About this RNA: Structure probing data (2A3 and DMS) for a 177-nucleotide construct. It was measured as part of the RMDB library OK1LIB. Values cover nucleotides 27 to 126. 2A3 adducts were read by reverse transcription with SuperScript II with manganese.
[RMDB]
RNA sequence: GGGAACGACUCGAGUAGAGUCGAAAAGAGUUGACAGGCAGCUUCGUCGACCUGUCAGUCGCUGCCACUCCUAGUUGCGCAAAGGCAAUCGACAGCAGCGGCUCCGGGCCGGGCGAGCGGCUAUGAGCCGCCUUUCUUCCUUCGGGAAGGAAGGCGGAAAAGAAACAACAACAACAAC
Reactivity to 2A3 in 0.01 (KOAc 150mM, MgCl2 10mM, bicine 150mM(pH8.5), 24C), signal-to-noise 9, nucleotides 027 to 126: g090a010g030u070u090g030a040c020a030g020g030c010a010g000c030u190u140c050g020u020c010g010a050c000c000u010g020u030c020a000g000u000c000g000c000u010g000c010c030a080c060u070c010c050u090a060g030u010u020g020c060g030c160a180a100a100g180g000c000a010a040u130c050g030a030c020a040g000c000a000g010c000g000g000c000u000c010c000g000g010g000c010c010g170g010g020c010g010a010g010c010g020g000c020u090a140u180g030a010g010
Reactivity to DMS in 0.01 (KOAc 150mM, MgCl2 10mM, bicine 150mM(pH8.5), 24C), signal-to-noise 9, nucleotides 027 to 126: g000a100g000u000u000g000a090c050a060g000g000c030a060g010c020u030u030c040g030u010c010g000a090c010c000u000g000u020c100a010g020u000c000g010c010u010g010c010c050a170c280u010c040c210u010a110g010u000u000g000c010g020c140a100a150a150g020g010c010a020a010u010c170g010a090c220a160g000c010a020g000c010g010g000c000u000c160c020g000g010g010c020c010g020g010g010c020g000a030g000c000g010g010c000u000a050u010g000a210g010